[RMDB]
RNA sequence: GGGAACGACUCGAGUAGAGUCGAAAAGUUAUGGAAAACGUCUUAGCUACCACUACAACAACAAUGCUGGACGGUGAUGGUUCGUCUUACUCGAAACCAUCACGUAGUGGUAGUCGUUCCCAUUCAACGUUAUGUGCCGUUUCGACGGCACAUAACGAAAAGAAACAACAACAACAAC
Reactivity to DMS in 0.01 (KOAc 150mM, MgCl2 10mM, bicine 150mM(pH8.5), 24C), signal-to-noise 2, nucleotides 027 to 126: g020u010u010a080u010g000g000a090a030a110a050c040g000u000c000u000u000a150g000c000u000a000c010c000a000c010u000a000c010a100a060c160a070a030c190a060a070u010g030c130u000g000g000a040c050g000g020u010g000a000u000g000g010u010u000c020g000u000c240u000u000a150c180u000c030g000a030a010a050c010c010a000u000c000a000c030g000u000a000g000u000g010g010u000a020g020u000c040g000u000u000c010c000c010a190u020u010c150a080a100
Reactivity to 2A3 in 0.01 (KOAc 150mM, MgCl2 10mM, bicine 150mM(pH8.5), 24C), signal-to-noise 3, nucleotides 027 to 126: g050u080u090a070u300g180g070a100a070a040a000c010g050u010c060u130u180a040g010c020u010a000c000c000a000c000u020a010c000a130a000c000a010a040c030a150a190u160g090c060u110g100g060a050c050g040g000u000g000a000u000g000g050u000u000c000g030u020c100u150u170a080c050u020c030g000a080a050a020c000c000a000u010c000a000c000g000u000a000g000u000g000g000u000a000g000u000c000g000u000u020c030c030c000a000u110u060c050a070a060
About this RNA:
The record gives the reactivity of an RNA of 177 nucleotides to DMS and 2A3. Source: RMDB library M2PK90, as collected in RNAgym. The 2A3 profile rests on 2,510 reads. For DMS, 1,107 sequencing reads were counted. Conditions: 150 mM KOAc, 10 mM MgCl2 and 150 mM bicine (pH 8.5), 24 C.